[RMDB]
The data come from the RNA Mapping Database (RMDB), library OK2TRN. This 177-nucleotide RNA was probed chemically with DMS and 2A3. The RNA was probed in 150 mM KOAc, 10 mM MgCl2 and 150 mM bicine (pH 8.5) at 24 C.
RNA sequence: GGGAACGACUCGAGUAGAGUCGAAAAGCUAGGGUUGCGGGUGACCCAGAUGAUCAACUCGCCGAAGGCCCAAGAGCUUCGGACAGUAACUAUUCACCGUCUGGACACGGAUGCAGACGAGGCCUGGCCCUUCAUGCACGUUCGCGUGCAUGAAGGGAAAAGAAACAACAACAACAAC
Reactivity to DMS in 0.01 (KOAc 150mM, MgCl2 10mM, bicine 150mM(pH8.5), 24C), signal-to-noise 2, nucleotides 027 to 126: g000c040u010a130g010g000g010u010u000g010c030g030g010g050u010g000a100c030c030c010a070g030a090u030g030a180u020c100a040a040c010u000c080g010c030c200g000a050a040g030g040c030c020c080a070a020g010a230g010c020u000u000c040g000g000a030c030a090g020u000a060a040c190u020a130u010u000c130a090c080c050g010u000c030u030g030g010a190c050a090c120g010g010a110u000g000c050a050g040a090c110g010a030g000g020c020c020u010g000g010
Reactivity to 2A3 in 0.01 (KOAc 150mM, MgCl2 10mM, bicine 150mM(pH8.5), 24C), signal-to-noise 1, nucleotides 027 to 126: g000c020u110a040g060g060g000u050u060g050c030g020g090g000u060g030a050c000c000c030a020g060a080u160g020a020u090c030a070a060c030u030c020g010c000c010g090a050a000g090g050c000c000c000a090a060g070a030g050c000u030u020c010g010g010a040c020a000g080u140a120a090c060u110a180u220u140c070a050c110c000g040u000c020u020g040g000a010c030a000c130g140g080a050u130g040c020a030g020a070c030g020a040g020g040c000c010u000g020g020
For DMS the reverse transcriptase was MarathonRT.